The record gives the reactivity of an RNA of 207 nucleotides to 2A3. For 2A3 the reverse transcriptase was SuperScript II with manganese. For 2A3, 1,510 sequencing reads were counted. The reactions ran in a buffer of 150 mM KOAc, 10 mM MgCl2 and 150 mM bicine (pH 8.5), at 24 C. Values are in units of 0.01, from 0 to 300, in steps of 10.

[RMDB]
RNA sequence: GGGAACGACUCGAGUAGAGUCGAAAAGAAAGAAAGAAAUUAGCUCGCCAGUUAGCGAGGUCUGUGCCCACACGACAGAUAAUCGGGUGCAACUCCCGCCCCUUUUCCGAGGGUCAUCGGAACCAAAAAAACUCAGGCAACUUCGGUUGCCUGAGAAGUAUGAAAUCAACUUCGGUUGAUUUCAUACAAAAGAAACAACAACAACAAC
Reactivity to 2A3 in 0.01 (KOAc 150mM, MgCl2 10mM, bicine 150mM(pH8.5), 24C), signal-to-noise 2, nucleotides 027 to 156: g030a000a060a010g080a040a090a000g080a080a190a060u130u050a090g010c000u000c000g000c030c020a150g160u200u160a010g010c000g000a010g000g030u020c010u020g030u030g020c020c080c000a040c000a000c100g160a010c020a030g050a090u090a070a050u130c010g000g000g000u000g000c010a010a000c010u010c000c000c000g030c000c000c000c010u100u170u060u020c000c000g000a000g000g000g020u050c010a000u010c000g000g010a000a020c030c020a050a050a010a020a020a040a050c000u000c000a000g010g030c000a010a000c000u020u040c060g130g000u000u000g000c000c000u000g000a000g000a010a000